[RMDB]
RNA sequence: GGGAACGACUCGAGUAGAGUCGAAAAGUCAUUCUUCUGCUUGCAGGAGAGCCCGGUGUCCUUGUGAUGCCAAACCCGUGUUCCUAACAGAAUACAAACCCUUCCCAUCGACACCAACUUGACCGUUUAGUGGAGACUAAUUCGUUAGUCUCCACUAAAAAGAAACAACAACAACAAC
Reactivity to 2A3 in 0.01 (KOAc 150mM, MgCl2 10mM, bicine 150mM(pH8.5), 24C), signal-to-noise 7, nucleotides 027 to 126: g040u020c030a070u080u020c000u010u000c000u000g050c030u060u170g030c010a010g010g020a020g010a010g020c010c010c010g010g010u030g000u040c020c020u070u100g070u140g080a030u050g040c060c000a090a030a060c040c030c020g030u020g010u030u020c020c010u030a070a050c020a050g040a070a030u090a070c050a030a080a090c010c000c010u020u010c000c010c020a020u030c020g020a000c010a010c030c000a030a050c050u070u080g050a070c010c040g040u010u010
Reactivity to DMS in 0.01 (KOAc 150mM, MgCl2 10mM, bicine 150mM(pH8.5), 24C), signal-to-noise 2, nucleotides 027 to 126: g000u020c060a040u040u000c000u000u000c020u020g000c030u010u000g040c010a030g000g000a150g000a020g020c060c000c020g010g040u000g020u000c000c070u000u010g010u000g000a080u010g000c070c050a060a090a090c100c050c040g020u000g020u000u000c000c020u000a000a110c270a090g000a020a070u020a070c100a100a090a100c010c020c020u000u000c000c000c000a060u030c060g000a050c050a020c030c020a110a070c060u000u020g000a060c090c050g020u020u010
Overview:
This 177-nucleotide RNA was probed chemically with 2A3 and DMS. Values cover nucleotides 27 to 126. It was measured as part of the RMDB libraries RFM100 and RFMREP. For DMS the reverse transcriptase was MarathonRT.